RNA sequence: GGGAACGACUCGAGUAGAGUCGAAAAUGAUGGGUCAAGCAUCACUGAUCAAGGUGUCAGAUGUCGCCAGCUGUGCCCAGCAGUUGUUUGCUGCAGCAGAGGGAGCAAGUAGCUUGCACCAGCACAGGUAACACGUGUGGUUCGCCACACGUGUUACAAAAGAAACAACAACAACAAC
Reactivity to DMS in 0.01 (KOAc 150mM, MgCl2 10mM, bicine 150mM(pH8.5), 24C), signal-to-noise 2, nucleotides 027 to 126: u000g000a060u000g030g010g000u000c110a000a040g000c020a150u000c070a140c030u020g030a030u000c090a200a100g010g030u000g030u000c020a040g030a190u000g010u020c110g000c050c000a080g000c000u000g000u000g000c080c300c060a140g020c010a020g000u000u050g010u020u000u000g050c020u000g020c040a190g040c050a020g020a020g010g000g010a230g040c020a010a050g000u000a190g010c000u010u020g040c040a060c020c060a080g010c070a090c070a060g000
Reactivity to 2A3 in 0.01 (KOAc 150mM, MgCl2 10mM, bicine 150mM(pH8.5), 24C), signal-to-noise 1, nucleotides 027 to 126: u080g070a040u030g040g010g070u070c050a040a040g000c010a000u060c040a010c040u020g000a030u050c070a180a280g200g000u160g040u100c030a030g050a140u060g060u070c010g060c090c020a000g000c020u000g000u020g090c000c000c070a020g000c020a000g010u050u100g110u110u120u010g060c030u020g000c000a100g010c000a030g030a060g150g020g030a050g000c030a060a010g000u070a050g030c000u030u110g000c010a050c000c000a020g020c050a020c000a010g160
The record gives the reactivity of an RNA of 177 nucleotides to DMS and 2A3. It was measured as part of the RMDB library OK2TRN. 2A3 is a SHAPE reagent: it acylates the 2'-hydroxyl of flexible nucleotides of all four kinds.